[RMDB]
RNA sequence: GGGAACGACUCGAGUAGAGUCGAAAAGAUAUGGAGGAAAGGCAUUAUGGUGUCCCUCGAUAAGCUGGCCAUCGGAAACGAUGGCAGCUUUUGACGAGGUCACCAUAAUGCCUUUCCUCCUAAGUCACCAUAGCAUACGGUUCGCCGUAUGCUAUGGAAAAGAAACAACAACAACAAC
Reactivity to DMS in 0.01 (KOAc 150mM, MgCl2 10mM, bicine 150mM(pH8.5), 24C), signal-to-noise 2, nucleotides 027 to 126: g000a040u000a300u010g000g010a000g010g010a010a000a030g020g010c010a020u000u000a000u000g020g010u000g000u000c300c000c010u000c000g010a170u000a020a010g010c000u010g020g000c010c010a000u000c000g020g010a160a120a230c020g030a000u000g000g030c000a010g010c010u000u000u000u000g020a230c170g000a010g010g000u000c010a020c000c000a000u000a000a000u000g020c010c000u010u000u000c000c000u010c000c000u000a000a060g010u000c030a280